The record gives the reactivity of an RNA of 177 nucleotides to 2A3 and DMS.
For 2A3, 11,207 sequencing reads were counted.
For DMS the reverse transcriptase was MarathonRT.
It was measured as part of the RMDB library OK1LIB.
Values cover nucleotides 27 to 126.
RNA sequence: GGGAACGACUCGAGUAGAGUCGAAAACAUUGGGGUAUAAUGGGAUCUCACAGACGUUCAACUUCGACUAGACCACCAAUGCACUAUUACCCCGGCCAGAACGUCAACGUCCACAUUCCGCCAUGCCCCUACUGAGGGCAUUCGUGCCCUCAGUAGGAAAAGAAACAACAACAACAAC
Reactivity to 2A3 in 0.01 (KOAc 150mM, MgCl2 10mM, bicine 150mM(pH8.5), 24C), signal-to-noise 9, nucleotides 027 to 126: c040a040u060u080g040g000g010g020u080a060u060a160a150u090g070g010g040a040u020c040u030c070a080c010a070g040a020c020g020u030u030c060a090a070c060u120u110c050g060a050c050u060a030g060a080c030c020a030c010c010a060a020u070g020c030a020c070u060a090u090u170a120c000c010c010c000g010g010c030c010a030g010a040a010c010g030u020c020a030a030c020g040u020c010c010a050c010a080u060u020c020c020g040c020c000a030u080g020c020c000
Reactivity to DMS in 0.01 (KOAc 150mM, MgCl2 10mM, bicine 150mM(pH8.5), 24C), signal-to-noise 4, nucleotides 027 to 126: c030a060u000u010g020g000g020g000u030a050u020a070a070u050g010g000g000a080u000c100u020c110a080c090a110g010a030c020g010u000u010c050a090a070c130u000u000c060g010a080c100u010a080g010a080c020c030a060c040c060a040a110u010g010c060a050c090u030a050u020u010a120c080c030c010c090g000g010c050c060a060g010a050a030c010g010u010c040a070a070c140g000u020c030c020a080c100a100u000u000c030c030g000c060c040a050u020g000c040c010